[RMDB]
RNA sequence: GGGAACGACUCGAGUAGAGUCGAAAAGUGAGAAGGACUCGCUGAGCUCAAGGGAAGGGUGGAGGAACAGCACAGGCCUUAGUGGGAUACUCAGAACGUCAUGGCCAGGUGGGAUGUGGGAUGACAGAUUUAGUAGACACUUCGGUGUCUACUAAAUAAAAGAAACAACAACAACAAC
Reactivity to DMS in 0.01 (KOAc 150mM, MgCl2 10mM, bicine 150mM(pH8.5), 24C), signal-to-noise 5, nucleotides 027 to 126: g020u000g000a090g000a170a130g000g010a120c020u010c030g010c050u000g000a110g010c030u000c060a090a210g000g010g020a080a080g000g000g010u000g010g010a070g010g010a080a100c120a070g010c090a060c100a100g010g010c020c020u000u000a090g010u000g000g010g010a150u010a090c110u000c100a110g010a080a100c150g000u000c050a050u000g000g020c020c020a110g020g010u000g010g000g010a080u010g010u000g000g000g000a070u010g000a060c110a080g000
Reactivity to 2A3 in 0.01 (KOAc 150mM, MgCl2 10mM, bicine 150mM(pH8.5), 24C), signal-to-noise 6, nucleotides 027 to 126: g040u030g010a040g040a140a120g130g080a080c020u000c040g010c020u020g030a010g020c020u030c080a050a070g060g000g050a120a060g060g020g040u180g020g030a060g030g030a100a030c010a020g040c050a020c030a060g070g000c000c010u060u050a040g030u080g020g070g010a030u070a110c050u060c100a040g080a190a040c060g050u040c050a060u070g010g000c030c010a030g010g060u100g020g010g010a060u130g040u100g040g010g010a040u080g020a010c020a050g120
Overview
This 177-nucleotide RNA was probed chemically with DMS and 2A3. Conditions: 150 mM KOAc, 10 mM MgCl2 and 150 mM bicine (pH 8.5), 24 C.